[RMDB]
This 177-nucleotide RNA was probed chemically with 2A3 and DMS. The 2A3 profile rests on 726 reads. For DMS the reverse transcriptase was MarathonRT.
RNA sequence: GGGAACGACUCGAGUAGAGUCGAAAAUUACUGGCUACAAUCCACUAGAUUACUUUGAGUACACCGAAAGUAGUGAAUAUCAAGAAGGGUAUGAUGCAGACCUAGAGGAUAUGGAUUGCGAAUACGACCUUUUUAACGCUUUCGAGCGUUAAAAAGGAAAAGAAACAACAACAACAAC
Reactivity to 2A3 in 0.01 (KOAc 150mM, MgCl2 10mM, bicine 150mM(pH8.5), 24C), signal-to-noise 1, nucleotides 027 to 126: u100u070a080c050u030g100g040c020u010a000c080a050a010u030c000c020a010c050u040a060g020a080u010u140a030c050u070u020u070g050a060g060u020a050c120a150c030c050g100a100a020a010g050u040a030g000u030g110a050a050u050a000u210c050a120a000g060a080a030g010g000g100u030a040u160g090a050u220g020c020a000g070a050c010c010u010a020g000a020g040g060a020u020a110u070g050g010a040u000u120g050c080g030a000a050u150a100c120g120a180
Reactivity to DMS in 0.01 (KOAc 150mM, MgCl2 10mM, bicine 150mM(pH8.5), 24C), signal-to-noise 2, nucleotides 027 to 126: u010u000a090c080u010g000g020c050u010a060c010a050a090u020c030c020a080c140u000a060g000a100u010u020a050c060u030u000u010g000a180g020u000a100c130a100c060c040g000a060a010a080g000u000a020g010u000g010a140a110u000a070u030c040a050a110g020a140a100g000g000g000u000a070u010g000a110u000g030c010a050g020a030c070c020u000a080g010a100g000g000a110u010a100u000g000g010a040u000u000g000c030g010a080a100u020a040c110g000a150